[RMDB]
RNA sequence: GGGAACGACUCGAGUAGAGUCGAAAAGGCUUACGUCAACAUACUUGACCGGCAGGUCAUGGCGUAAGCGGUUCUAAGCCUGGCAAGACCUUUGACCACAAUGCCUCCGAUUUGGCCGGGGAGGCGUCAUAAUAGAAUGUUUCGACAUUCUAUUAUGAAAAGAAACAACAACAACAAC
Reactivity to DMS in 0.01 (KOAc 150mM, MgCl2 10mM, bicine 150mM(pH8.5), 24C), signal-to-noise 9, nucleotides 027 to 126: g010g010c000u000u000a000c010g020u000c010a040a130c210a130u020a110c240u030u010g000a120c000c000g000g020c200a140g000g000u000c030a090u000g000g000c000g000u000a010a010g000c000g010g010u000u000c060u010a090a110g000c040c020u000g010g020c050a080a070g000a110c060c050u000u000u010g010a110c020c020a090c210a060a050u010g000c010c010u000c010c010g010a150u010u010u010g010g010c010c020g000g000g000g000a020g010g010c010g010u000
Reactivity to 2A3 in 0.01 (KOAc 150mM, MgCl2 10mM, bicine 150mM(pH8.5), 24C), signal-to-noise 9, nucleotides 027 to 126: g100g000c000u000u000a000c000g000u010c010a050a040c020a220u250a130c090u120u140g040a050c000c010g040g090c100a070g010g000u010c020a030u030g000g000c000g000u000a000a000g000c000g000g000u050u010c030u080a070a040g030c000c020u040g040g020c050a090a050g060a190c010c000u070u090u110g050a050c010c010a030c050a070a050u100g000c000c000u000c000c010g080a110u080u050u170g060g000c010c000g030g000g000g010a000g000g000c000g000u000